[RMDB]
RNA sequence: GGGAACGACUCGAGUAGAGUCGAAAAGUCCCUUGGCUCCAUCUUGCCUGGAUAUGACGUCCCCGGACUGAAAACCGCCUCACAUUCUUCCCUGGCCGACGGGCUGUGUCGGGGGGCUGGGCUGUGCAAGUAUCGACAUCUUCGGAUGUCGAUACUUAAAAGAAACAACAACAACAAC
Reactivity to 2A3 in 0.01 (KOAc 150mM, MgCl2 10mM, bicine 150mM(pH8.5), 24C), signal-to-noise 3, nucleotides 027 to 126: g060u010c040c000c000u000u030g010g020c020u040c050c030a110u020c040u130u130g050c000c020u010g000g030a070u090a050u230g090a030c060g040u040c030c010c010c040g040g020a050c050u100g060a050a030a000a080c000c030g010c010c010u050c020a060c030a050u140u020c000u040u050c000c020c010u010g110g020c030c000g030a020c050g060g000g020c080u100g040u030g030u070c050g000g000g000g000g000g000c000u050g020g050g020c020u040g000u030g090c020
Reactivity to DMS in 0.01 (KOAc 150mM, MgCl2 10mM, bicine 150mM(pH8.5), 24C), signal-to-noise 1, nucleotides 027 to 126: g000u010c000c010c010u000u030g030g010c040u000c000c090a060u000c000u060u050g000c030c010u030g000g010a060u000a110u020g010a150c070g000u000c000c000c010c060g040g010a080c010u000g000a130a030a080a140c130c070g000c000c030u050c010a110c030a000u000u000c040u000u050c000c000c010u000g000g020c040c070g010a080c170g000g010g030c040u020g030u000g010u010c030g000g000g000g000g000g000c060u000g040g030g060c030u000g030u000g000c130
Structure probing data (2A3 and DMS) for a 177-nucleotide construct. The reactions ran in a buffer of 150 mM KOAc, 10 mM MgCl2 and 150 mM bicine (pH 8.5), at 24 C.